[RMDB]
RNA sequence: GGGAACGACUCGAGUAGAGUCGAAAAUUCGAAGAAUCUUGCGGAGGGUACAUUACCCUCGCUGACGGUAAGAAAACGCAGAUUCUCGGUGAGGGUGCCGGUGUGCUCCAUGGCAUAGAUGGUGACAACCUAUAGUCCGUUUCGACGGACUAUAGGUAAAAGAAACAACAACAACAAC
Reactivity to 2A3 in 0.01 (KOAc 150mM, MgCl2 10mM, bicine 150mM(pH8.5), 24C), signal-to-noise 3, nucleotides 027 to 126: u060u010c010g010a090a010g030a040a020u020c030u090u120g000c050g050g010a040g070g010g030u050a050c050a130u110u270a030c010c000c000u000c010g000c000u010g050a040c100g050g040u080a070a030g050a090a100a030a010c060g000c000a000g020a090u080u000c020u020c030g000g010u080g030a060g090g040g000u070g040c080c040g030g020u050g000u030g020c010u020c070c040a080u130g080g000c010a040u060a100g080a060u040g010g050u090g010a030c050a050
Reactivity to DMS in 0.01 (KOAc 150mM, MgCl2 10mM, bicine 150mM(pH8.5), 24C), signal-to-noise 6, nucleotides 027 to 126: u000u010c020g010a130a070g010a050a020u000c010u000u000g040c010g010g020a060g020g000g010u010a080c200a140u000u000a030c000c000c000u000c020g010c060u000g010a110c150g010g010u010a070a110g010a050a060a080a240c070g020c060a030g000a050u000u000c020u000c010g010g000u010g010a070g000g000g000u000g000c120c090g000g010u000g020u000g000c020u000c060c080a080u010g000g000c040a050u000a060g000a060u000g010g010u000g000a080c150a090